Description
Conditions: 150 mM KOAc, 10 mM MgCl2 and 150 mM bicine (pH 8.5), 24 C. Structure probing data (2A3 and DMS) for a 177-nucleotide construct. Reactivities are given for positions 27 through 126. Reactivities are rounded to 0.1 and cut off at 0 and 3. The 2A3 profile rests on 3,323 reads.
[RMDB]
RNA sequence: GGGAACGACUCGAGUAGAGUCGAAAAGAUAUGGAGAUGGCUCGAUAAGUCCCGGUCGGAAACGACCGAAGGACUUUUGACGAGCGUUUCCUAAGUCAAAAGAUUCUAGGGUUCGCCCUAGAAUCAACUUACUAAUCACGUUCGCGUGAUUAGUAAGAAAAGAAACAACAACAACAAC
Reactivity to 2A3 in 0.01 (KOAc 150mM, MgCl2 10mM, bicine 150mM(pH8.5), 24C), signal-to-noise 2, nucleotides 027 to 126: g010a030u040a010u080g010g000a050g010a030u090g300g050c000u000c010g130a190u050a300a060g000u000c000c000c000g000g000u010c020g000g020a100a050a070c020g000a000c000c010g030a030a060g000g000a010c000u090u080u070u200g150a060c000g020a010g000c000g000u010u010u050c000c000u010a040a030g050u020c010a080a010a060a300g000a000u000u000c000u000a000g080g030g000u040u120c300g180c040c010c000u000a000g010a020a000u000c000a000a000
Reactivity to DMS in 0.01 (KOAc 150mM, MgCl2 10mM, bicine 150mM(pH8.5), 24C), signal-to-noise 3, nucleotides 027 to 126: g010a040u000a300u000g000g010a030g010a010u010g030g040c000u000c000g030a190u010a010a010g000u000c000c010c010g010g000u000c020g020g000a040a070a170c010g000a000c020c000g040a080a070g020g010a010c000u000u000u010u000g010a160c060g010a000g020c000g000u000u000u000c000c000u000a050a170g000u010c040a090a100a120a180g000a010u000u000c000u000a000g010g000g020u000u020c240g020c000c000c000u000a000g010a010a000u000c000a050a090